[RMDB]
RNA sequence: GGGAACGACUCGAGUAGAGUCGAAAAAGGCAACCGCUGCCUGCACCGCAAGGUGCAGGGGGAGGAAAGUCCGGACUCCACAGGGCAGGGUGUUGGCUAACAGCCAUCCACGGCAACGUGCGGAAUAGGUACGGUGCAAAUUCGUUUGCACCGUACCAAAAGAAACAACAACAACAAC
Reactivity to DMS in 0.01 (KOAc 150mM, MgCl2 10mM, bicine 150mM(pH8.5), 24C), signal-to-noise 1, nucleotides 027 to 126: a060g010g000c040a040a230c050c000g000c010u000g070c010c030u000g000c040a020c000c020g030c150a090a040g040g000u000g000c020a000g000g010g000g000g030a070g050g000a100a170a010g000u020c030c040g000g000a130c090u020c060c040a110c010a120g020g000g000c010a070g000g000g030u060g040u020u000g020g000c040u010a120a000c200a120g000c010c000a060u070c050c020a040c050g020g000c160a090a160c040g020u000g000c100g000g000a080a040u000a100
Reactivity to 2A3 in 0.01 (KOAc 150mM, MgCl2 10mM, bicine 150mM(pH8.5), 24C), signal-to-noise 2, nucleotides 027 to 126: a020g000g000c030a050a040c010c000g020c060u040g150c040c000u000g020c000a000c000c000g000c110a060a060g000g020u000g010c000a000g000g000g000g030g020a050g000g050a290a000a030g030u030c030c040g000g010a000c000u000c010c000a010c000a070g000g040g000c010a020g040g040g000u080g040u040u080g060g040c070u030a010a140c060a100g010c000c000a000u000c050c030a010c040g040g010c070a090a090c100g040u070g030c090g050g010a030a040u140a170
The record gives the reactivity of an RNA of 177 nucleotides to DMS and 2A3.
Conditions: 150 mM KOAc, 10 mM MgCl2 and 150 mM bicine (pH 8.5), 24 C.
Source: RMDB library RFM100, as collected in RNAgym.
For DMS the reverse transcriptase was MarathonRT.